[RMDB]
Chemical mapping of a 177-nucleotide RNA with 2A3 and DMS. It was measured as part of the RMDB library OK2TST. For DMS the reverse transcriptase was MarathonRT. The RNA was probed in 150 mM KOAc, 10 mM MgCl2 and 150 mM bicine (pH 8.5) at 24 C.
RNA sequence: GGGAACGACUCGAGUAGAGUCGAAAAGAAGCUCGGGACGGUACGUAGCCGGAUACACCGCGGACGCCAGGCACUGCGGGACUACCUGGCAGCGCACCCCGAACAUGGCGAGUGCGCAGUUCACGUCAACACUCCACAGAUUCGUCUGUGGAGUGUUAAAAGAAACAACAACAACAAC
Reactivity to 2A3 in 0.01 (KOAc 150mM, MgCl2 10mM, bicine 150mM(pH8.5), 24C), signal-to-noise 2, nucleotides 027 to 126: g050a060a010g060c010u010c030g000g030g030a030c030g020g050u080a000c020g030u040a020g000c000c010g000g010a030u040a040c050a020c000c000g000c020g020g010a030c050g050c060c060a100g090g000c070a030c100u050g000c030g000g000g060a000c020u000a040c010c010u000g000g020c020a030g000c000g000c000a010c000c000c010c010g080a240a090c100a170u250g020g010c080g010a090g000u020g030c000g000c020a020g000u020u050c070a020c120g040u040c060
Reactivity to DMS in 0.01 (KOAc 150mM, MgCl2 10mM, bicine 150mM(pH8.5), 24C), signal-to-noise 4, nucleotides 027 to 126: g000a140a150g010c020u000c040g000g000g010a060c080g000g020u000a030c080g030u000a090g010c010c010g020g000a080u000a060c140a250c020c000g000c020g010g000a070c110g010c030c040a070g000g010c070a110c020u000g000c040g000g000g000a110c300u000a020c010c010u000g020g000c000a190g010c000g020c000a030c020c020c000c000g000a090a130c210a130u010g030g020c130g040a100g000u010g000c000g020c000a110g010u000u000c040a100c100g010u000c080